[RMDB]
The record gives the reactivity of an RNA of 207 nucleotides to 2A3 and DMS. The reactions ran in a buffer of 150 mM KOAc, 10 mM MgCl2 and 150 mM bicine (pH 8.5), at 24 C. For DMS the reverse transcriptase was MarathonRT.
RNA sequence: GGGAACGACUCGAGUAGAGUCGAAAAGGAGCUCGGGAUGCUCUAAAUCCUAGGAAGAGCAUCCGUACGCUCUUCCUUACCACCAGAGCGUAUUGAAGUGUUGGUGGUUUUGAGACACUUCAGUGAGGCCUCAAAAGGACAUUGGUCUUACCGAGCACUAAUAGUCGCGUUUCGACGCGACUAUUAGAAAAGAAACAACAACAACAAC
Reactivity to 2A3 in 0.01 (KOAc 150mM, MgCl2 10mM, bicine 150mM(pH8.5), 24C), signal-to-noise 2, nucleotides 027 to 156: g140g020a040g020c000u010c010g000g000g010a020u060g010c020u000c000u050a070a030a100u080c010c010u040a020g040g010a010a000g000a010g020c010a050u080c120c020g020u040a000c040g010c000u010c030u020u020c000c000u000u040a070c010c010a020c000c030a000g020a010g060c010g030u110a080u070u060g050a050a030g000u010g030u070u050g010g040u030g010g030u000u000u030u060g000a000g000a000c010a030c000u040u020c030a080g010u040g070a020g000g010c010c010u060c060a100a150a000a000g120g000a090c070a110u100u080g000g000u030c000u000u020a040c000c000g000a000g000c000a010
Reactivity to DMS in 0.01 (KOAc 150mM, MgCl2 10mM, bicine 150mM(pH8.5), 24C), signal-to-noise 1, nucleotides 027 to 156: g030g000a180g000c010u000c010g050g000g000a070u000g020c020u020c010u020a050a120a130u020c010c020u020a140g060g000a030a040g000a020g010c000a170u070c050c300g040u010a030c200g010c000u010c000u000u010c000c010u010u020a090c100c080a070c060c040a080g030a030g040c020g000u000a080u000u000g020a070a030g020u010g010u000u000g020g000u000g080g010u020u000u000u020g020a250g000a070c040a030c000u000u010c010a120g020u000g010a110g040g020c020c030u000c060a020a050a100a120g000g000a080c130a150u000u000g000g030u000c010u000u000a100c000c000g000a070g040c030a180
It was measured as part of the RMDB library OK3TST.
For DMS, 1,951 sequencing reads were counted.